[RMDB]
RNA sequence: GGGAACGACUCGAGUAGAGUCGAAAAGAUAUGGACCGUCAGCCAGAUAUACUCUAGGGAGAAGGCCAUCGGAAACGAUGGUCAUCUUCGAAGAACUAGAGGUAUAUCUGGCUGACGGUCCUAAGUCCAAUACUGGAUUGUUCGCAAUCCAGUAUUGAAAAGAAACAACAACAACAAC
Reactivity to DMS in 0.01 (KOAc 150mM, MgCl2 10mM, bicine 150mM(pH8.5), 24C), signal-to-noise 4, nucleotides 027 to 126: g010a130u010a300u010g010g000a010c010c000g010u000c000a010g000c000c000a000g000a010u000a010u000a020c000u010c000u000a000g020g000g010a010g020a030a030g020g010c000c000a010u000c010g000g010a160a130a180c000g010a020u000g010g010u000c010a010u000c010u000u000c040g000a120a120g010a150a300c010u030a010g010a030g000g000u000a000u000a000u010c000u000g000g000c000u000g000a000c000g000g000u000c000c000u000a010a080g000u000c040